[RMDB]
RNA sequence: GGGAACGACUCGAGUAGAGUCGAAAACUGCCGAUCAGUGGCGUUGUAUGGAUUCGCACGAGAAGAAGAGACUAAUCACAAAUUGAACAGGCACCCCCCUAAUCUCAACAGGUGUUGCCCAUGUCUGAGUACGAUCAAUAUUCGUAUUGAUCGUACUAAAAGAAACAACAACAACAAC
Reactivity to DMS in 0.01 (KOAc 150mM, MgCl2 10mM, bicine 150mM(pH8.5), 24C), signal-to-noise 8, nucleotides 027 to 126: c070u000g020c010c030g010a120u020c080a090g020u010g010g000c050g010u000u010g010u000a080u010g000g010a090u010u000c050g020c080a070c080g010a090g010a080a090g010a110a080g000a090g000a070c070u020a070a080u010c070a060c140a050a060a090u020u010g000a060a080c080a070g000g000c050a110c030c000c020c020c010c030u010a070a080u010c040u000c060a040a090c120a050g000g010u000g000u000u000g010c060c020c030a080u020g000u010c050u000g000
Reactivity to 2A3 in 0.01 (KOAc 150mM, MgCl2 10mM, bicine 150mM(pH8.5), 24C), signal-to-noise 5, nucleotides 027 to 126: c020u020g020c020c010g060a130u130c100a070g070u090g120g020c070g010u070u070g070u070a170u100g070g030a040u050u070c040g010c010a050c050g040a020g040a170a040g050a090a020g050a020g020a080c030u120a080a040u060c040a030c060a080a100a070u090u180g040a070a030c010a010g010g020c020a040c010c030c010c000c010c010u030a040a060u070c030u010c030a030a080c010a030g030g030u040g020u050u090g050c020c000c000a030u080g040u030c020u020g000